Record summary:
Structure probing data (2A3) for a 207-nucleotide construct. For 2A3 the reverse transcriptase was SuperScript II with manganese. The reactions ran in a buffer of 150 mM KOAc, 10 mM MgCl2 and 150 mM bicine (pH 8.5), at 24 C. Values cover nucleotides 27 to 156.
RNA sequence: GGGAACGACUCGAGUAGAGUCGAAAACUGCCGACGAGAUCGAAGGCCGCUGGCUCGGGGCCCUCAAACGGGCGUGGAACGGGUACAAGGGAGCGACCCGUCGAUUCUCGGAGGCCCUCGAAACGGCUCGCGAGGCAAGACAAGACGCAGAGGCAGCUACACAGCUCCUAUUCGUAGGAGCUGUGUAAAAAGAAACAACAACAACAAC
Reactivity to 2A3 in 0.01 (KOAc 150mM, MgCl2 10mM, bicine 150mM(pH8.5), 24C), signal-to-noise 1, nucleotides 027 to 156: c000u010g020c010c000g000a060c030g010a000g030a080u080c040g030a040a040g050g000c010c000g050c040u060g060g030c000u030c090g030g020g050g000c060c020c030u050c040a190a210a080c100g010g020g000c080g030u100g060g040a170a070c080g000g000g050u030a010c030a050a170g080g120g000a020g000c060g040a070c000c030c000g010u030c000g050a050u220u000c010u000c000g000g000a000g000g070c000c000c020u030c010g020a040a050a010c040g010g000c000u010c010g000c030g050a010g090g000c010a010a020g030a030c040a000a020g000a040c040g030c130a040g040a060g120g000c020a010g010c010